[RMDB]
RNA sequence: GGGAACGACUCGAGUAGAGUCGAAAACGUUUAUUCGGUUGAUAACGAAACACCGUCCUGCUCAGCGAUAACGUCCUGCAUGCCUGGCGUAUGCUCAUCGUAAACUGCGUGGUCAGAUAGUUGACGAGUAACGGUAAAGGUUCGCCUUUACCGUUACAAAAGAAACAACAACAACAAC
Reactivity to DMS in 0.01 (KOAc 150mM, MgCl2 10mM, bicine 150mM(pH8.5), 24C), signal-to-noise 3, nucleotides 027 to 126: c060g010u000u010u000a100u010u010c060g000g010u000u010g020a070u010a080a090c050g020a120a060a120c100a120c100c020g010u010c020c020u010g010c060u000c020a080g000c060g000a070u010a070a100c080g000u010c020c020u000g020c050a040u010g030c030c010u010g010g010c060g020u000a020u000g000c020u000c050a090u000c040g020u000a030a080a070c050u010g000c090g010u010g020g000u000c050a040g010a100u000a040g010u010u000g000a080c070g000a130
Reactivity to 2A3 in 0.01 (KOAc 150mM, MgCl2 10mM, bicine 150mM(pH8.5), 24C), signal-to-noise 2, nucleotides 027 to 126: c010g010u000u060u120a170u090u120c060g060g020u100u140g140a100u090a160a080c030g070a180a010a000c080a000c040c000g020u000c000c010u000g000c020u020c030a020g090c000g050a030u030a110a020c010g030u000c000c010u030g030c000a010u070g010c020c010u040g080g000c040g040u030a020u070g030c010u040c050a060u050c010g070u050a060a070a060c060u070g010c030g070u130g030g000u070c000a000g000a040u090a010g080u020u080g030a010c010g000a010
Record summary:
This 177-nucleotide RNA was probed chemically with DMS and 2A3. Reactivities are given for positions 27 through 126. The data come from the RNA Mapping Database (RMDB), library RFMREP. The 2A3 profile rests on 1,932 reads. Conditions: 150 mM KOAc, 10 mM MgCl2 and 150 mM bicine (pH 8.5), 24 C. Reactivities are rounded to 0.1 and cut off at 0 and 3. For DMS, 2,661 sequencing reads were counted.